[RMDB]
RNA sequence: GGGAACGACUCGAGUAGAGUCGAAAAUGUAAAGGGUUACGCCUGCGAGGUGGCAUUGUGACCAGCUGGGAAGCAUAGCCUCUGGCCAAAGCCGGAAGCAGGCACUUCAGGGGAGUGGGGCUGGAAUGAGGAUACGCUGGCUAAGCACACUCAGCAACACUAAUAAAUCGUUCGCGAUUUAUUAGUGAAAAGAAACAACAACAACAAC
Reactivity to 2A3 in 0.01 (KOAc 150mM, MgCl2 10mM, bicine 150mM(pH8.5), 24C), signal-to-noise 2, nucleotides 027 to 156: u200g010u140a120a100a040g030g000g020u030u070a040c080g020c000c000u000g020c020g050a080g000g100u090g030g020c040a050u010u050g080u060g050a280c020c010a010g020c150u170g020g010g040a140a060g090c120a080u060a120g020c020c000u000c000u020g010g000c020c000a050a000a000g000c010c000g020g000a030a000g000c020a000g000g010c010a020c000u100u080c050a030g000g030g010g000a120g040u100g010g000g010g060c100u010g010g030a110a010u080g020a040g060g000a030u060a090c140g000c020u010g070g020c060u080a100a000g040c030a060c000a020c060u080c000a030g020c010a030a030

Structure probing data (2A3) for a 207-nucleotide construct. For 2A3 the reverse transcriptase was SuperScript II with manganese.